[RMDB]
RNA sequence: GGGAACGACUCGAGUAGAGUCGAAAAACGGUCAUAUACGUAUGACCGAAUGAGCAUAACAGGGCCACCCCAAAGCGUUCACAUUGUGGCACCUGUCAGAUUCUGGUAAAUCUGCGAGUUCUGCUAAAUUAGGUAACUCUCUUCGGAGAGUUACCAACAACAUGUAUUGGUUCGCCAAUACAUGUUGAAAAGAAACAACAACAACAAC
Reactivity to DMS in 0.01 (KOAc 150mM, MgCl2 10mM, bicine 150mM(pH8.5), 24C), signal-to-noise 3, nucleotides 027 to 156: a100c020g000g010u010c010a000u000a040u000a120c240g070u000a010u000g000a010c010c010g010a030a020u000g010a160g030c040a100u000a100a070c060a060g010g000g010c000c020a040c020c030c010c020a050a090a150g010c070g000u000u000c060a060c050a150u000u000g010u000g010g000c020a060c000c000u010g020u000c000a020g010a040u000u000c040u000g020g030u010a090a030a030u000c010u000g020c050g010a130g000u000u000c130u000g010c020u000a040a070a160u000u010a110g030g020u000a010a000c000u000c000u000c000u000u000c300g040g000a020g010a030g010u000u000a000c000c000a010a030
Reactivity to 2A3 in 0.01 (KOAc 150mM, MgCl2 10mM, bicine 150mM(pH8.5), 24C), signal-to-noise 7, nucleotides 027 to 156: a000c000g000g000u000c000a000u020a000u020a010c220g090u030a020u000g000a000c000c000g010a000a060u080g010a000g020c030a060u060a170a020c000a010g000g000g000c000c000a040c010c020c000c020a070a120a030g110c070g060u210u170c080a080c050a190u120u190g010u010g000g030c100a210c040c000u000g010u000c000a000g010a020u070u010c030u200g060g050u100a050a060a030u010c010u010g020c040g030a060g060u080u060c040u040g030c020u060a050a130a160u200u130a080g000g000u000a000a000c000u000c000u000c000u040u060c130g040g000a000g000a000g020u000u000a000c000c000a000a000